[RMDB]
RNA sequence: GGGAACGACUCGAGUAGAGUCGAAAAUAGGUCCGGAGUCUAUCUCCAUCUGGUCCGUUCGGGCCCUCUUCGCCGGGGGAGCCCCCUCUCCAUCCUUGUCUUUCUUUCCGAGAAUUCCUUUGAUGUUACACGAGUUCGUUCGCGAACUCGAAAAGAAACAACAACAACAAC
Reactivity to DMS in 0.01 (KOAc 150mM, MgCl2 10mM, bicine 150mM(pH8.5), 24C), signal-to-noise 3, nucleotides 027 to 129: u030a050g020g030u010c000c000g080g020a030g030u050c120u020a190u080c060u040c020c070a110u060c090u020g040g030u050c060c080g040u060u050c110g040g040g030c030c040c070u030c040u040u010c180g060c050c050g000g000g000g000g000a000g010c020c010c030c050c010u040c030u010c050c000a000u000c030c030u040u030g010u030c050u010u000u060c040u000u040u000c040c040g000a120g030a230a160u000u020c020c040u000u030u090g000a100u060g020u040u070a050c020a130
Reactivity to 2A3 in 0.01 (KOAc 150mM, MgCl2 10mM, bicine 150mM(pH8.5), 24C), signal-to-noise 4, nucleotides 027 to 129: u090a040g030g000u040c010c010g010g030a020g030u030c090u240a160u050c040u030c040c050a050u030c120u100g010g000u000c040c000g020u080u110c020g040g000g000c000c070c000u050c040u070u050c070g030c010c010g010g000g010g000g000a010g000c010c000c000c000c000u000c010u040c010c020a110u080c000c000u050u060g020u060c000u010u070u000c000u040u010u000c030c000g020a030g030a070a030u020u040c010c000u020u050u110g060a040u050g110u140u060a040c040a010
The data come from the RNA Mapping Database (RMDB), library 15KLIB.
Structure probing data (DMS and 2A3) for a 170-nucleotide construct.
Values cover nucleotides 27 to 129.
In probing experiments dimethyl sulfate is read out at A N1 and C N3, which are open when not base-paired.
The reactions ran in a buffer of 150 mM KOAc, 10 mM MgCl2 and 150 mM bicine (pH 8.5), at 24 C.
Reactivities are rounded to 0.1 and cut off at 0 and 3.
For DMS the reverse transcriptase was MarathonRT.